The data come from the RNA Mapping Database (RMDB), library OK3TST. This 207-nucleotide RNA was probed chemically with DMS and 2A3. For 2A3, 947 sequencing reads were counted. For DMS, 1,626 sequencing reads were counted.
RNA sequence: GGGAACGACUCGAGUAGAGUCGAAAAGGUCUUUCUGACCAGCUUGAUUCCCAACCAAGUAGCUUGUGCCGGGGUGAGCAUGGUGGGUGGAACAUUGAAAAGAUCAGCAAGAUGACCAGGGUAGAGGAAGGUGAAUAUUUAGAAAUGUCAUGGUAAAGGAUUAUCGAUCAUUCGUGAUCGAUAAUCCAAAAGAAACAACAACAACAAC
Reactivity to DMS in 0.01 (KOAc 150mM, MgCl2 10mM, bicine 150mM(pH8.5), 24C), signal-to-noise 1, nucleotides 027 to 156: g000g000u020c010u000u000u000c200u030g020a030c010c020a120g050c060u040u000g000a100u000u000c020c000c000a180a130c060c070a050a050g010u010a100g120c080u010u000g010u000g030c020c000g020g020g090g020u010g010a030g050c130a020u000g080g000u000g040g020g020u010g000g010a070a080c040a060u000u010g000a080a080a070a170g000a040u000c010a070g000c040a030a090g020a250u010g010a080c020c010a100g010g070g010u000a070g000a040g010g000a060a080g000g040u020g000a100a020u000a080u000u000u000a060g000a250a030a060u010g000u000c020a070u000g010g040u000a120a050a260
Reactivity to 2A3 in 0.01 (KOAc 150mM, MgCl2 10mM, bicine 150mM(pH8.5), 24C), signal-to-noise 2, nucleotides 027 to 156: g020g010u030c030u060u250u110c110u150g020a010c000c000a020g050c030u080u100g070a100u060u060c000c000c000a000a000c000c000a040a040g030u060a000g070c060u130u130g010u130g090c030c020g010g040g010g000u010g040a010g000c050a020u050g000g010u050g000g000g000u060g020g010a060a020c040a090u050u160g120a050a050a100a130g050a090u020c000a000g000c040a040a000g050a140u060g010a010c000c050a070g050g010g000u000a010g020a000g040g030a010a010g020g000u040g010a030a000u100a100u060u160u090a060g040a020a070a020u050g010u090c050a040u020g010g060u140a000a080a040